[RMDB]
RNA sequence: GGGAACGACUCGAGUAGAGUCGAAAAAUAGUGAUGCUGUAUCCUACAAGUCUAGUACAACGUAUAAACUGACUGUAGGUGACAUCUUCGUACUUACCUCUCACUCUGUGGCUACCUUGACGGCGCCGCUCGUAGAAGUGUUCGCACUUCUACGAGCAAAAGAAACAACAACAACAAC
Reactivity to DMS in 0.01 (KOAc 150mM, MgCl2 10mM, bicine 150mM(pH8.5), 24C), signal-to-noise 2, nucleotides 027 to 126: a080u000a050g000u000g010a030u000g010c100u010g000u010a160u010c000c010u010a010c010a000a120g020u000c010u010a090g000u000a080c120a030a130c300g010u010a110u000a050a090a130c080u000g000a010c050u000g010u000a010g010g000u000g000a050c060a020u000c010u010u020c050g020u000a050c080u020u000a150c060c030u010c060u000c050a070c060u000c020u000g010u000g040g000c000u010a120c030c020u000u000g000a090c120g000g040c300g040c080c030
Reactivity to 2A3 in 0.01 (KOAc 150mM, MgCl2 10mM, bicine 150mM(pH8.5), 24C), signal-to-noise 2, nucleotides 027 to 126: a030u120a010g050u030g030a020u030g000c040u040g000u060a050u000c000c010u010a020c030a180a080g000u000c010u260a000g010u020a080c040a170a050c180g130u180a040u070a230a160a020c010u020g010a010c000u000g000u020a000g040g000u010g000a000c000a020u010c000u020u010c010g030u040a040c010u010u040a040c000c000u030c000u000c010a050c020u000c020u050g080u040g090g020c000u020a070c000c000u020u040g080a070c060g010g060c020g020c030c030